RNA sequence: GGGAACGACUCGAGUAGAGUCGAAAACGUCUUAAAUUAAAUUUCCCUUGCUGAGCACAUCUCAGCAAACAAUAACAAAUAACAAAUAAGAACAGCAGGGAAGGUUGUUCUUAUUUGUUACAAUUAACAAUAAUGUCACUUUCGAGUGACAUUAUUGAAAAGAAACAACAACAACAAC
Reactivity to 2A3 in 0.01 (KOAc 150mM, MgCl2 10mM, bicine 150mM(pH8.5), 24C), signal-to-noise 4, nucleotides 027 to 126: c040g050u040c070u100u200a120a150a140u100u140a080a150a130u060u110u030c000c000c000u000u040g000c000u000g000a010g040c120a050c020a300u140c030u010c020a000g020c000a000a000a010c010a020a060u200a040a020c060a080a110a030u040a020a000c000a010a010a010u010a000a000g000a000a000c000a000g030c010a020g130g120g100a060a040g140g000u000u020g000u010u010c000u000u000a000u000u000u000g000u000u000a000c000a000a050u090u120a090a000
Reactivity to DMS in 0.01 (KOAc 150mM, MgCl2 10mM, bicine 150mM(pH8.5), 24C), signal-to-noise 3, nucleotides 027 to 126: c210g010u030c120u010u000a050a100a100u010u010a090a080a130u010u000u000c000c010c020u010u000g010c000u010g000a020g020c250a150c280a110u000c000u000c010a030g000c000a000a010a060c100a100a060u010a070a140c130a080a150a170u000a010a000c000a010a020a000u000a000a020g000a010a000c000a030g000c000a050g010g030g000a060a130g010g000u000u000g010u000u000c000u000u000a000u000u000u010g000u000u000a010c100a080a120u020u000a020a180

An RNA of 177 nucleotides, treated with 2A3 and DMS and read out base by base. For DMS, 1,821 sequencing reads were counted. The data come from the RNA Mapping Database (RMDB), library M2PK90. The reactions ran in a buffer of 150 mM KOAc, 10 mM MgCl2 and 150 mM bicine (pH 8.5), at 24 C.